[RMDB]
RNA sequence: GGGAACGACUCGAGUAGAGUCGAAAAUGAACACGAAUAGACACACAACAUCCACGUUUGCUUAAACGGAUUCGCGCAGAUUUAUUCGUUUUAGGAUGUGUGGAGCACAAAGCAUAUAGAGAAUAACAUCAUCAGCUGCAUUCGUGCAGCUGAUGAUAAAAGAAACAACAACAACAAC
Reactivity to 2A3 in 0.01 (KOAc 150mM, MgCl2 10mM, bicine 150mM(pH8.5), 24C), signal-to-noise 3, nucleotides 027 to 126: u230g010a030a030c010a000c030g080a050a010u140a130g080a010c020a000c000a000c030a270a000c000a080u030c030c000a040c050g030u000u000u110g130c000u080u060a000a030a010c010g040g000a030u030u060c020g000c070g020c250a020g060a150u010u050u110a070u000u100c000g060u000u000u000u100a070g030g050a060u020g040u000g010u000g130g010a020g000c020a020c010a180a090a000g090c000a000u210a080u070a130g080a000g050a270a000u130a110a040c050
Reactivity to DMS in 0.01 (KOAc 150mM, MgCl2 10mM, bicine 150mM(pH8.5), 24C), signal-to-noise 1, nucleotides 027 to 126: u010g000a110a030c100a010c110g020a060a190u000a100g000a080c080a040c020a110c010a170a090c090a170u010c000c010a040c050g000u010u000u000g000c020u000u020a030a030a010c030g000g000a030u000u010c180g000c110g020c080a030g040a080u010u040u050a000u000u000c060g040u000u010u000u030a130g030g070a000u020g040u000g000u000g000g000a040g000c030a070c110a040a110a010g000c010a020u000a030u000a110g050a100g000a050a110u000a060a060c160